Conditions: 150 mM KOAc, 10 mM MgCl2 and 150 mM bicine (pH 8.5), 24 C.
Structure probing data (2A3 and DMS) for a 177-nucleotide construct.
In probing experiments dimethyl sulfate is read out at A N1 and C N3, which are open when not base-paired.
RNA sequence: GGGAACGACUCGAGUAGAGUCGAAAAGGAUCUGAACCAGUCCUUGAUUCCUGAGGAAAUCCAAGCUACGAGCUGGACUGGUGUCGACAGAGUGCUGGGGGCACUGAAUGCCGUUGGUUCCGGGUUGACUCCUAUCGAGAUUCGUCUCGAUAGGAGUAAAAGAAACAACAACAACAAC
Reactivity to 2A3 in 0.01 (KOAc 150mM, MgCl2 10mM, bicine 150mM(pH8.5), 24C), signal-to-noise 2, nucleotides 027 to 126: g020g000a040u060c050u070g020a040a000c020c000a000g000u000c000c000u010u020g070a100u020u060c010c000u040g150a110g010g150a060a070a060u040c020c020a110a080g000c030u050a060c240g030a060g070c030u030g000g010a000c000u070g020g020u030g050u020c030g080a050c010a020g090a060g180u140g230c030u030g040g010g020g010g000c000a000c010u040g090a100a070u090g030c010c030g040u030u060g000g030u020u010c030c020g060g020g010u040u110g050
Reactivity to DMS in 0.01 (KOAc 150mM, MgCl2 10mM, bicine 150mM(pH8.5), 24C), signal-to-noise 4, nucleotides 027 to 126: g010g010a020u010c020u000g010a060a060c020c010a240g000u000c010c000u000u000g000a220u000u010c000c010u000g020a120g020g000a070a110a180u000c000c060a060a060g010c030u000a110c210g010a110g010c030u000g000g010a080c190u010g000g000u000g010u000c020g000a080c060a030g010a190g010u010g010c030u000g000g000g010g000g020c030a010c030u000g010a060a120u010g000c000c030g010u010u000g010g020u000u000c030c040g000g000g000u000u010g010
For 2A3 the reverse transcriptase was SuperScript II with manganese.
The data come from the RNA Mapping Database (RMDB), library OK2TST.